[RMDB]
RNA sequence: GGGAACGACUCGAGUAGAGUCGAAAAGAUAUGGAACUGAUGCGGAACUUGGAUUUAUCGGAAACGAUUGUCAGUUUACAUCUGGUUCCUAAGUCAAAACGGUACAACAGUUCGCUGUUGUACCGAACCUAUGGGGUAAGUUCGCUUACCCCAUAGGAAAAGAAACAACAACAACAAC
Reactivity to DMS in 0.01 (KOAc 150mM, MgCl2 10mM, bicine 150mM(pH8.5), 24C), signal-to-noise 5, nucleotides 027 to 126: g000a050u000a300u000g000g010a020a010c000u000g000a010u000g000c040g010g020a010a010c020u010u020g020g010a030u000u010u010a010u000c010g010g000a110a080a180c000g020a010u000u010g010u000c000a020g010u000u000u000a100c020a010u000c010u010g020g000u000u000c000c000u010a040a090g020u000c060a040a070a110a190c010g010g000u000a010c000a000a010c000a000g010u000u010c230g020c010u000g010u010u000g000u010a010c010c000g000a020a040
Reactivity to 2A3 in 0.01 (KOAc 150mM, MgCl2 10mM, bicine 150mM(pH8.5), 24C), signal-to-noise 6, nucleotides 027 to 126: g020a010u080a040u130g010g010a000a000c010u030g000a010u030g030c230g260g010a020a000c020u110u260g150g010a050u260u300u190a020u070c010g030g010a070a040a040c020g010a020u010u010g020u020c000a000g000u010u050u040a010c000a000u000c070u120g030g000u000u010c000c000u020a130a010g030u010c010a020a030a070a120c020g000g000u010a000c000a000a000c000a000g010u060u120c230g100c200u000g000u000u000g000u000a000c000c000g000a000a000